Conditions: 150 mM KOAc, 10 mM MgCl2 and 150 mM bicine (pH 8.5), 24 C. Chemical mapping of a 177-nucleotide RNA with DMS and 2A3. Reactivities are rounded to 0.1 and cut off at 0 and 3. It was measured as part of the RMDB libraries RFM100 and RFMREP.

RNA sequence: GGGAACGACUCGAGUAGAGUCGAAAAAGGGUUUCCCGGCGUAAGUUCCUGAACAAUUUGCGGAAAUUGGUGUGGGUCGUAUUGUCCCCCCCUCUCCGCCAGAUUGAGGCGAGUAGGUGCGCCAGUGCCAAAUAACUUGCUUCGGCAAGUUAUUUGGAAAAGAAACAACAACAACAAC
Reactivity to DMS in 0.01 (KOAc 150mM, MgCl2 10mM, bicine 150mM(pH8.5), 24C), signal-to-noise 3, nucleotides 027 to 126: a120g010g000g010u000u000u010c000c020c010g000g020c050g020u000a030a150g000u000u000c020c010u010g020a150a150c010a010a020u000u000u000g010c000g010g010a000a060a050u010u020g000g020u000g030u030g010g010g000u000c020g010u030a110u020u030g010u000c020c000c000c010c120c000c120u000c080u000c010c010g000c120c060a000g010a040u000u010g000a100g010g010c060g010a070g010u020a100g010g030u010g000c020g000c000c010a090g020u040g010
Reactivity to 2A3 in 0.01 (KOAc 150mM, MgCl2 10mM, bicine 150mM(pH8.5), 24C), signal-to-noise 4, nucleotides 027 to 126: a010g080g010g000u030u030u010c010c000c000g010g010c000g020u060a070a070g090u080u020c010c000u020g040a040a010c010a010a020u010u030u050g010c000g050g010a040a080a100u150u090g040g010u070g030u190g070g000g000u050c090g060u190a220u200u300g030u060c010c000c000c000c000c000c000u000c000u000c000c010g020c040c000a020g000a020u020u060g030a030g040g050c070g010a050g090u110a040g070g080u050g000c000g010c000c020a040g030u060g070